Chemical mapping of a 177-nucleotide RNA with 2A3 and DMS.

[RMDB]
RNA sequence: GGGAACGACUCGAGUAGAGUCGAAAAGAUAUGGACGUGUGGAGAGCGAUAAGAACGUAUCGGAAACGAUACAGUUCUUUUGACGCUCCACACACGUCCUAAGUCAAAACUUGGGUUCGCCCAAGAAGCCAUACGGGUAGUUCGCUACCCGUAUGGCAAAAGAAACAACAACAACAAC
Reactivity to 2A3 in 0.01 (KOAc 150mM, MgCl2 10mM, bicine 150mM(pH8.5), 24C), signal-to-noise 1, nucleotides 027 to 126: g020a010u090a020u140g010g000a000c030g010u000g030u000g000g070a080g000a020g180c050g040a070u020a230a000g020a000a010c010g010u030a000u000c020g030g030a150a010a030c020g000a010u000a010c060a060g020u030u020c000u060u000u000u020g050a020c060g020c010u000c050c000a000c010a000c020a000c010g030u000c000c010u000a010a000g030u000c020a000a000a140a190c020u000u020g000g070g000u100u050c260g150c000c000c000a020a000g040a070a010
Reactivity to DMS in 0.01 (KOAc 150mM, MgCl2 10mM, bicine 150mM(pH8.5), 24C), signal-to-noise 2, nucleotides 027 to 126: g000a010u020a300u010g000g000a030c000g030u050g010u000g000g020a300g020a000g010c000g050a160u000a000a030g000a030a000c000g000u010a000u020c000g000g000a120a120a170c010g010a010u000a000c000a030g020u030u000c000u000u000u040u010g020a280c160g000c010u020c000c300a180c000a000c000a000c000g000u000c000c000u000a000a050g000u000c010a080a080a110a110c000u000u000g000g000g040u010u030c300g000c000c010c000a020a030g000a100a080
About this RNA: The data come from the RNA Mapping Database (RMDB), library TTRDES. For DMS the reverse transcriptase was MarathonRT. Reactivities are given for positions 27 through 126. The reactions ran in a buffer of 150 mM KOAc, 10 mM MgCl2 and 150 mM bicine (pH 8.5), at 24 C.